[RMDB]
RNA sequence: GGGAACGACUCGAGUAGAGUCGAAAAAGACUGGAAGCCCCAGAGGAAGACCAUAGCCAUGGGGAGAGAUGCUAGGAGUGGGGGGCGACCGGAACGAGGAGAAAAGUAAAGAGAGCAACGGGGCUAGGAAGUGGCCUCUUCGGAGGCCACAAAAGAAACAACAACAACAAC
Reactivity to 2A3 in 0.01 (KOAc 150mM, MgCl2 10mM, bicine 150mM(pH8.5), 24C), signal-to-noise 1, nucleotides 027 to 129: a000g020a000c060u030g080g000a050a020g030c100c000c000c000a000g060a000g010g000a000a000g000a020c130c000a080u030a130g120c130c030a020u010g020g010g090g000a010g000a000g060a050u100g100c060u060a010g000g000a070g000u170g030g020g000g000g060g000c000g000a040c000c010g000g000a000a110c000g000a060g110g080a050g050a000a050a000a010g050u180a110a020a000g050a000g010a000g040c000a000a000c050g000g000g000g000c030u010a030g000g090a050a150
Reactivity to DMS in 0.01 (KOAc 150mM, MgCl2 10mM, bicine 150mM(pH8.5), 24C), signal-to-noise 1, nucleotides 027 to 129: a080g000a080c120u010g010g060a110a100g000c250c000c000c030a260g020a030g110g010a090a020g000a020c050c070a160u020a200g030c170c050a130u010g150g000g000g010a000g020a090g040a060u040g000c110u000a000g000g000a070g000u020g010g000g000g050g010g000c070g000a050c100c080g000g050a040a020c100g010a000g060g000a000g010a000a030a000a080g040u050a020a050a070g050a150g040a040g000c000a060a020c090g000g050g000g000c160u000a080g000g000a140a090

The data come from the RNA Mapping Database (RMDB), library 15KLIB. The record gives the reactivity of an RNA of 170 nucleotides to 2A3 and DMS. For DMS the reverse transcriptase was MarathonRT. Values cover nucleotides 27 to 129. The RNA was probed in 150 mM KOAc, 10 mM MgCl2 and 150 mM bicine (pH 8.5) at 24 C. For DMS, 2,847 sequencing reads were counted.